An RNA of 207 nucleotides, treated with DMS and 2A3 and read out base by base. The DMS profile rests on 6,130 reads. Source: RMDB library RNAMAK, as collected in RNAgym. For DMS the reverse transcriptase was MarathonRT.
RNA sequence: GGGAACGACUCGAGUAGAGUCGAAAACAUUAACGCUGGGAUGUGUUAGCGAUGACACGGGAGCUUACCUGAAGCGCGCACGGGUAAGCAUCGAUCGUGUCAAUCGCUAAACAUCCUGUGCUGAAGCGCGCACGGCAACCGAAAGGUGCGAGGGGAACAGAAUUGUAUUGUUCGCAAUACAAUUCUGAAAAGAAACAACAACAACAAC
Reactivity to DMS in 0.01 (KOAc 150mM, MgCl2 10mM, bicine 150mM(pH8.5), 24C), signal-to-noise 2, nucleotides 027 to 156: c080a120u000u000a070a110c060g010c010u000g000g000g010a000u000g030u020g020u000u000a010g020c010g010a040u000g010a010c020a020c010g010g000g010a050g020c010u000u000a010c010c020u010g010a020a060g040c010g000c000g030c010a300c010g000g000g030u000a010a020g040c000a090u000c120g020a040u000c000g000u000g000u000c010a000a010u010c010g010c000u000a010a020a000c010a000u000c000c000u000g000u000g020c020u000g010a040a020g000c000g030c040g040c040a300c040g010g000c010a060a060c010c020g000a110a120a210g030g080u010g010c030g000a150g000g010g010g010a130a300
Reactivity to 2A3 in 0.01 (KOAc 150mM, MgCl2 10mM, bicine 150mM(pH8.5), 24C), signal-to-noise 4, nucleotides 027 to 156: c030a040u160u230a130a070c030g010c010u020g000g000g000a000u000g020u000g020u040u020a000g000c000g000a000u000g010a000c000a000c000g000g000g000a010g000c000u000u000a000c000c020u020g040a220a050g010c000g000c010g000c000a010c010g010g010g000u010a000a010g030c010a030u260c010g000a000u000c000g000u010g010u020c010a000a030u010c000g000c010u000a000a000a000c000a000u000c000c000u000g000u000g000c000u010g020a140a030g010c010g000c000g000c010a020c030g000g000c000a000a010c010c000g050a100a060a040g010g000u010g010c030g020a100g020g040g020g030a040a030